Chemical mapping of a 177-nucleotide RNA with DMS and 2A3. For DMS the reverse transcriptase was MarathonRT. Reactivities are given for positions 27 through 126. It was measured as part of the RMDB library OK1LIB. The reactions ran in a buffer of 150 mM KOAc, 10 mM MgCl2 and 150 mM bicine (pH 8.5), at 24 C. For DMS, 2,736 sequencing reads were counted.
RNA sequence: GGGAACGACUCGAGUAGAGUCGAAAACUCGCCCGCUACGACGGCGAGGCCAGAAGCUGGCGCAUCGAGCCGGGCGGUUACACGGUGGCGGUGGGCGCUUCGGCGGUAGCGCUGAAGCUGGCAGCCAGUUCACACGGAAGUUCGCUUCCGUGUGAACAAAAGAAACAACAACAACAAC
Reactivity to DMS in 0.01 (KOAc 150mM, MgCl2 10mM, bicine 150mM(pH8.5), 24C), signal-to-noise 2, nucleotides 027 to 126: c000u000c010g030c030c020c040g000c060u040a060c100g010a090c070g020g010c000g020a300g010g090c000c000a080g000a150a150g030c040u000g000g000c000g000c030a160u010c050g020a130g090c070c030g000g000g020c050g010g010u030u010a130c040a060c020g020g000u020g020g000c020g030g000u000g000g010g000c020g020c020u010u020c060g060g000c000g010g010u020a090g010c000g020c030u000g000a070a050g000c000u000g010g030c040a140g000c000c030a150
Reactivity to 2A3 in 0.01 (KOAc 150mM, MgCl2 10mM, bicine 150mM(pH8.5), 24C), signal-to-noise 5, nucleotides 027 to 126: c060u060c030g000c000c100c000g010c090u230a200c070g080a020c020g020g010c010g020a040g030g000c000c030a140g020a110a010g030c040u060g110g010c030g000c020a030u010c030g020a010g080c130c000g020g000g000c030g010g020u040u030a060c050a010c040g100g130u230g080g010c050g010g030u060g050g100g020c040g010c000u150u130c000g010g000c020g070g070u160a090g140c010g020c010u010g030a040a030g000c010u030g080g000c000a010g020c000c010a020